[RMDB]
RNA sequence: GGGAACGACUCGAGUAGAGUCGAAAAAUUGCACAACUUAAGUUUGUCGAGGAUCAUUUUUUUGAACUGAAUCAUGCUCUUUUUAAGUGCUUUGAAACCCUCGAUGAAUGUGUCAAUGUGCAAAGAUCUUAAUCGAAGGAUUCGUCCUUCGAUUAAGAAAAGAAACAACAACAACAAC
Reactivity to 2A3 in 0.01 (KOAc 150mM, MgCl2 10mM, bicine 150mM(pH8.5), 24C), signal-to-noise 8, nucleotides 027 to 126: a000u040u020g000c000a010c000a030a030c030u080u090a140a020g020u010u000u010g010u000c000g000a000g010g010a040u050c050a080u080u030u040u030u060u100u180g080a100a060c080u090g020a030a050u070c020a040u080g020c010u010c000u010u120u020u020u080a100a040g010u010g020c000u090u050u090g060a070a070a040c020c000c000u000c000g000a000u000g010a000a010u040g050u000g010u040c010a020a020u010g000u000g000c000a010a020a010g090a020u000
Reactivity to DMS in 0.01 (KOAc 150mM, MgCl2 10mM, bicine 150mM(pH8.5), 24C), signal-to-noise 3, nucleotides 027 to 126: a130u010u000g000c010a000c000a030a030c030u000u000a020a080g000u020u000u000g010u020c010g000a010g000g020a230u020c070a020u010u000u010u030u000u000u010g010a020a140c110u020g000a070a140u010c030a010u030g000c030u000c030u000u010u040u030u040a090a010g010u000g010c020u010u000u010g000a020a130a150c210c000c010u010c000g000a010u010g000a000a000u000g010u010g010u010c090a010a040u000g000u000g000c010a000a010a050g010a110u020